[RMDB]
RNA sequence: GGGAACGACUCGAGUAGAGUCGAAAAGGCCAUGAAGUACGGGGCGAACUCUAAUACCUGCUGGGGCGUCCGGCAUUUCUUGAUCGUGGCCCUCAUUUUGCCGUCCAGGACGUGCUUAAGGAUGCCAUUAUGGACCCAUUCCUUUUUCGCCGCUGGCCCCCAAGAGUAGAUUCGUCUACUCUUGGGGAAAAGAAACAACAACAACAAC
Reactivity to DMS in 0.01 (KOAc 150mM, MgCl2 10mM, bicine 150mM(pH8.5), 24C), signal-to-noise 1, nucleotides 027 to 156: g000g050c000c020a060u010g030a050a010g040u000a110c060g000g020g020g010c030g000a050a100c060u000c080u040a080a170u000a110c070c030u010g040c040u010g020g000g050g020c060g010u000c000c010g030g030c020a020u000u020u000c040u010u010g010a080u000c040g060u000g020g020c000c060c020u010c060a150u000u020u000u010g020c050c020g080u000c040c070a120g010g000a060c010g010u020g000c070u010u010a090a110g020g000a120u000g000c000c030a220u000u000a060u000g020g010a130c020c040c060a300u020u000c010c000u000u000u000u000u000c030g000c000c000g040c040u000g040g000c080
Reactivity to 2A3 in 0.01 (KOAc 150mM, MgCl2 10mM, bicine 150mM(pH8.5), 24C), signal-to-noise 3, nucleotides 027 to 156: g030g000c030c020a040u080g070a030a020g070u080a030c050g030g010g000g000c010g030a130a100c040u060c050u170a110a140u090a220c020c020u050g010c080u090g040g010g030g080c060g010u000c030c020g010g010c000a010u080u120u020c020u040u080g090a110u090c070g070u060g000g000c010c030c000u110c030a140u080u200u200u210g020c050c010g030u020c020c010a000g010g020a030c030g010u030g010c000u120u050a090a020g000g020a020u020g040c010c060a060u120u100a080u110g020g020a110c010c060c020a050u050u080c030c000u040u130u010u060u090c040g030c020c020g100c160u070g020g010c010